[RMDB]
RNA sequence: GGGAACGACUCGAGUAGAGUCGAAAAAUAGAAUCUUUUUUGGUCAUAAAGAACCAAAGAAUUCCACUGGUCAUUAUCGUAUCCGUUCACAUGCUGGGUUGUAGUUCUUAUAAGGUUCUCUCGCAAACCACCUCCUGGGAUUCGUCCCAGGAGGUGGAAAAGAAACAACAACAACAAC
Reactivity to 2A3 in 0.01 (KOAc 150mM, MgCl2 10mM, bicine 150mM(pH8.5), 24C), signal-to-noise 1, nucleotides 027 to 126: a000u250a000g090a060a030u070c010u000u090u000u000u090u120g050g000u020c000a020u050a250a240a040g030a070a000c030c030a010a010a010g000a000a020u080u030c040c050a030c110u090g060g020u050c050a040u030u200a090u180c000g030u010a030u070c020c070g030u090u200c020a020c020a030u140g020c010u120g000g000g060u040u130g020u070a080g000u050u060c020u120u110a300u060a300a000g000g000u040u000c020u000c020u030c060g060c020a020a020a090